[RMDB]
RNA sequence: GGGAACGACUCGAGUAGAGUCGAAAAUGCGGGGUGGGGCGCAGCCGGCCAGCAGCCCGAGAGCCAGGACCGAACACCCGAGGCGCCGCAAGACGGGCAUGCGACGGUCCUACCGGAAGGCGGCCAAUGUAUUUACCGUAUUCGUACGGUAAAUACAAAAAGAAACAACAACAACAAC
Reactivity to 2A3 in 0.01 (KOAc 150mM, MgCl2 10mM, bicine 150mM(pH8.5), 24C), signal-to-noise 6, nucleotides 027 to 126: u130g010c030g000g010g020g000u080g010g040g020g000c040g000c020a020g030c020c020g030g020c020c010a020g030c020a020g030c010c000c000g080a110g000a000g060c040c060a010g000g010a010c010c010g040a070a040c040a030c030c010c000g030a070g040g040c110g020c020c030g000c040a060a040g080a040c030g000g000g030c050a050u140g020c040g040a050c020g020g000u010c010c010u040a070c000c000g020g030a040a030g040g000c000g000g000c010c000a050a060
Reactivity to DMS in 0.01 (KOAc 150mM, MgCl2 10mM, bicine 150mM(pH8.5), 24C), signal-to-noise 6, nucleotides 027 to 126: u020g020c030g020g000g010g040u010g000g010g000g020c040g010c050a080g010c060c050g010g020c030c040a100g010c070a110g020c040c020c030g010a130g000a120g010c120c060a070g000g000a050c020c020g010a260a140c100a120c030c030c020g010a140g010g000c040g000c050c040g000c080a060a070g010a160c040g010g000g010c070a080u020g020c050g000a180c030g000g000u010c010c020u000a070c070c000g010g000a110a100g000g000c060g000g010c040c050a080a130